[RMDB]
RNA sequence: GGGAACGACUCGAGUAGAGUCGAAAAUGUACGGGAUGCGUUAGCUCAGGAACUGCUCUCAGGGCGCAUUCGCCUCCCUGAAAGCAUUAUUGCGCGGCAUCGUGACAAAGCUGGGCAAGCUGCAUGACAAAAUGCUGAUCUUCGGAUCAGCAUUUUGAAAAGAAACAACAACAACAAC
Reactivity to DMS in 0.01 (KOAc 150mM, MgCl2 10mM, bicine 150mM(pH8.5), 24C), signal-to-noise 6, nucleotides 027 to 126: u010g000u010a080c110g020g010g000a030u000g010c020g030u020u010a190g010c020u000c020a060g010g000a120a110c300u000g000c020u000c010u000c010a030g000g000g060c300g000c020a230u000u010c030g000c060c020u000c000c000c000u000g010a010a010a000g020c000a010u000u000a020u010u010g040c080g000c070g010g000c130a090u000c020g010u010g000a120c050a020a060a140g020c000u000g000g000g020c070a060a050g000c010u010g010c050a060u000g000a210
Reactivity to 2A3 in 0.01 (KOAc 150mM, MgCl2 10mM, bicine 150mM(pH8.5), 24C), signal-to-noise 2, nucleotides 027 to 126: u150g020u030a060c040g040g020g100a020u010g030c000g020u060u080a020g000c010u000c020a000g040g120a080a050c070u010g010c000u000c000u020c020a010g020g000g000c030g000c040a090u160u170c050g020c000c020u060c000c000c000u020g000a000a010a000g000c000a010u040u050a060u110u090g000c010g030c000g030g040c100a180u250c080g020u010g010a020c020a030a100a020g030c010u010g020g000g020c020a010a030g020c040u100g020c000a000u070g030a050
Source: RMDB library OK2TRN, as collected in RNAgym. An RNA of 177 nucleotides, treated with DMS and 2A3 and read out base by base. The 2A3 profile rests on 2,228 reads. Reactivities are rounded to 0.1 and cut off at 0 and 3. Values cover nucleotides 27 to 126. For 2A3 the reverse transcriptase was SuperScript II with manganese.